The record gives the reactivity of an RNA of 177 nucleotides to DMS and 2A3. 2A3 adducts were read by reverse transcription with SuperScript II with manganese. Conditions: 150 mM KOAc, 10 mM MgCl2 and 150 mM bicine (pH 8.5), 24 C. The data come from the RNA Mapping Database (RMDB), library OK2TST.
RNA sequence: GGGAACGACUCGAGUAGAGUCGAAAAAUGAGAAUACUUCCUACGCCUAGAACGUACGGUGGUCCCCUGGAUUUGCAUGAACAGGUCUGACCUUUGAGCUAUAGAAAGACAUGCUAGUCCUCAGUCCGCGUGCUAAAGUUUUCGAACUUUAGCACGCAAAAGAAACAACAACAACAAC
Reactivity to DMS in 0.01 (KOAc 150mM, MgCl2 10mM, bicine 150mM(pH8.5), 24C), signal-to-noise 2, nucleotides 027 to 126: a040u010g000a110g010a090a070u000a070c050u000u000c000c010u010a030c040g020c030c050u020a090g000a060a150c040g020u000a040c140g030g000u000g010g010u010c030c030c010c130u010g020g000a040u000u000u000g000c040a010u000g010a170a090c140a030g010g020u000c040u020g020a040c070c010u000u010u000g010a120g030c110u010a140u000a050g000a050a050a060g000a170c020a020u000g020c020u000a060g010u000c010c000u000c140a090g000u010c100c180
Reactivity to 2A3 in 0.01 (KOAc 150mM, MgCl2 10mM, bicine 150mM(pH8.5), 24C), signal-to-noise 2, nucleotides 027 to 126: a000u190g010a090g050a150a100u140a180c010u040u070c000c000u000a010c030g000c020c070u160a150g010a170a050c010g000u030a000c060g060g040u000g020g100u040c010c010c000c000u020g000g000a010u020u040u000g000c030a030u020g000a110a000c010a090g000g030u000c070u100g090a110c000c000u010u010u140g100a110g000c040u100a030u070a210g200a070a020a000g050a000c000a000u020g000c000u010a000g030u010c000c020u060c020a010g040u110c060c050